[RMDB]
RNA sequence: GGGAACGACUCGAGUAGAGUCGAAAAUACAAGUUCAUGUCCACGAUUCACACUCAGAAGCUGCCAGAAUAGAGAGCUUAGGAAUGGAGCUUGCACUACAAGUCCUUUGCAUACAAGAGUUAAGACGGAUGCAAAGACCAUUCGUGGUCUUUGCAUCAAAAGAAACAACAACAACAAC
Reactivity to 2A3 in 0.01 (KOAc 150mM, MgCl2 10mM, bicine 150mM(pH8.5), 24C), signal-to-noise 3, nucleotides 027 to 126: u230a030c070a060a030g050u020u080c070a060u090g080u070c000c000a050c020g050a040u110u090c010a000c020a000c030u000c020a040g000a130a020g040c020u050g030c040c000a030g080a150a000u150a060g110a020g050a000g040c000u060u050a030g020g090a050a050u100g030g000a010g020c020u020u070g000c030a040c030u110a040c060a120a000g000u000c020c000u060u070u060g000c010a050u090a150c040a040a070g130a050g140u100u070a050a000g050a020c040g070
Reactivity to DMS in 0.01 (KOAc 150mM, MgCl2 10mM, bicine 150mM(pH8.5), 24C), signal-to-noise 2, nucleotides 027 to 126: u030a070c180a030a030g000u030u030c000a040u000g000u010c050c030a120c050g030a040u010u000c090a010c090a050c120u000c070a110g000a070a080g010c050u000g000c000c000a100g010a080a040u000a090g050a090g000a070g050c000u000u000a040g000g050a110a070u010g050g000a030g000c030u000u000g040c150a110c050u030a060c190a070a050g000u030c000c000u000u000u040g010c110a030u110a030c240a020a190g000a100g000u000u000a040a050g000a120c290g000